RNA sequence: GGGAACGACUCGAGUAGAGUCGAAAAGAAAGAGAGAAAGAAGCCGGCUCUGCUAGUUUCACGGCAACCACGUUGAAAUUACAACGAAAGAAGCUCGCACUCAACUUCAACGGCUUAACGAGUGCAAAAAAGAAGUAUCACUUCGGUGAUACUUCAAGGUACACUACAUGUUCGCAUGUAGUGUACCAAAAGAAACAACAACAACAAC
Reactivity to 2A3 in 0.01 (KOAc 150mM, MgCl2 10mM, bicine 150mM(pH8.5), 24C), signal-to-noise 2, nucleotides 027 to 156: g070a030a110a000g050a010g010a050g020a040a180a060g080a060a030g040c030c050g100g000c040u020c030u060g050c020u000a020g070u010u060u140c100a080c000g050g050c050a060a060c010c000a010c010g040u080u010g090a090a110a070u180u080a050c020a040a000c030g040a050a060a140g040a030a000g030c070u140c180g030c000a010c010u010c000a100a000c010u070u030c020a130a050c020g010g000c020u040u040a000a000c070g020a000g000u000g000c000a010a010a020a020a020a020g000a000a000g000u000a000u000c020a000c000u050u060c130g080g000u000g010a000u010a000c000u000u010c000a000a010

The record gives the reactivity of an RNA of 207 nucleotides to 2A3.
The data come from the RNA Mapping Database (RMDB), library M2RFPK.
Values cover nucleotides 27 to 156.
Reactivities are rounded to 0.1 and cut off at 0 and 3.